[RMDB]
Source: RMDB library OK2TST, as collected in RNAgym.
The record gives the reactivity of an RNA of 177 nucleotides to DMS and 2A3.
Values cover nucleotides 27 to 126.
For 2A3 the reverse transcriptase was SuperScript II with manganese.
Reactivities are rounded to 0.1 and cut off at 0 and 3.
RNA sequence: GGGAACGACUCGAGUAGAGUCGAAAAUAGCCUUUGGUGAACAGCAAGAAGGAGUAGUUUGGGUUGCCACUAAAGAAGCAGAUCAUAAUCCUGUGCGCUUUGGUGAUAGACCUGAAAGCACACCAGCUCGGGAAUAAGUGUUCGCACUUAUUCCCGAAAAAGAAACAACAACAACAAC
Reactivity to DMS in 0.01 (KOAc 150mM, MgCl2 10mM, bicine 150mM(pH8.5), 24C), signal-to-noise 2, nucleotides 027 to 126: u000a140g000c030c000u020u000u010g020g000u000g000a090a130c190a110g030c020a070a130g010a080a080g000g000a150g000u000a090g010u000u010u020g000g010g000u010u010g030c180c040a020c010u000a030a020a030g000a080a300g010c000a030g010a030u030c280a120u010a090a170u020c140c010u000g000u010g000c240g030c030u000u000u010g000g010u010g000a070u000a080g020a030c000c010u000g050a030a040a070g040c050a130c060a050c030c040a000g000c120
Reactivity to 2A3 in 0.01 (KOAc 150mM, MgCl2 10mM, bicine 150mM(pH8.5), 24C), signal-to-noise 1, nucleotides 027 to 126: u070a010g020c020c010u000u070u070g040g000u030g020a080a040c060a010g020c060a020a130g040a090a020g140g100a090g060u080a030g120u050u030u070g000g030g000u020u040g040c030c020a020c000u010a030a000a000g010a040a000g020c000a000g010a050u070c060a190u180a290a020u070c040c010u050g030u080g050c070g030c070u000u010u000g040g000u010g010a090u080a130g050a040c010c020u010g000a010a030a000g070c020a000c010a020c060c010a010g040c030